RNA sequence: GGGAACGACUCGAGUAGAGUCGAAAAGUGUCGGACUCGCAAGUGCGAAUAUAUUUUAUCCCUAAACAGGGAGUGGAAAGCACGUGCUGGAGUGGAAAACACGUCCAUCCCAAAGCGAGAAAUGAAACGAAUAUUGCGGAUUCGUCCGCAAUAUUCGAAAAGAAACAACAACAACAAC
Reactivity to 2A3 in 0.01 (KOAc 150mM, MgCl2 10mM, bicine 150mM(pH8.5), 24C), signal-to-noise 2, nucleotides 027 to 126: g020u040g020u040c010g000g050a000c000u010c000g050c020a050a050g000u000g000c040g110a130a000u070a000u010a040u060u140u050u160a060u020c000c000c000u110a210a300a110c150a070g020g000g010a020g010u050g020g050a000a010a030g000c010a000c030g000u010g000c020u090g080g060a030g020u130g020g010a000a100a020a020c000a000c010g000u000c010c030a070u020c070c020c000a010a050a010g100c120g060a060g140a060a050a030u190g010a080a020a000
Reactivity to DMS in 0.01 (KOAc 150mM, MgCl2 10mM, bicine 150mM(pH8.5), 24C), signal-to-noise 2, nucleotides 027 to 126: g020u000g010u010c020g000g020a140c000u000c010g000c010a080a060g030u000g000c000g040a070a110u000a060u000a080u010u000u000u010a110u000c010c000c000u000a080a150a080c250a080g000g000g000a030g000u000g000g000a120a080a220g000c030a020c020g000u000g040c030u000g040g030a050g010u000g020g000a050a060a080a110c050a010c000g000u000c060c060a100u000c040c000c040a030a030a060g030c050g030a060g010a110a110a080u000g000a020a050a160